The data come from the RNA Mapping Database (RMDB), library OK2TST. Chemical mapping of a 177-nucleotide RNA with DMS. The RNA was probed in 150 mM KOAc, 10 mM MgCl2 and 150 mM bicine (pH 8.5) at 24 C. The DMS profile rests on 1,342 reads.
[RMDB]
RNA sequence: GGGAACGACUCGAGUAGAGUCGAAAAGUUAGGGCAGUGGAACAAUUCACCAGGAUUGGUUGUGAAUCAGGGAGUCGCAGACAACAUCUACCGGGUAAACCCUAGUAAUGGCGUCCUCUUCCCUUGGACGUGUUCGAAGGUUCGCCUUCGAACACGUAAAAGAAACAACAACAACAAC
Reactivity to DMS in 0.01 (KOAc 150mM, MgCl2 10mM, bicine 150mM(pH8.5), 24C), signal-to-noise 2, nucleotides 027 to 126: g000u010u010a050g020g030g020c010a090g040u000g020g020a060a100c110a070a060u020u000c040a070c040c100a070g020g000a110u000u000g010g000u020u020g020u000g010a060a070u000c090a080g010g010g000a070g000u000c070g010c090a100g010a070c030a070a140c070a110u000c080u000a020c050c090g020g000g040u000a090a100a130c140c010c010u020a090g010u020a040a020u000g020g000c190g000u010c020c030u010c050u010u000c000c020c000u030u000g000g010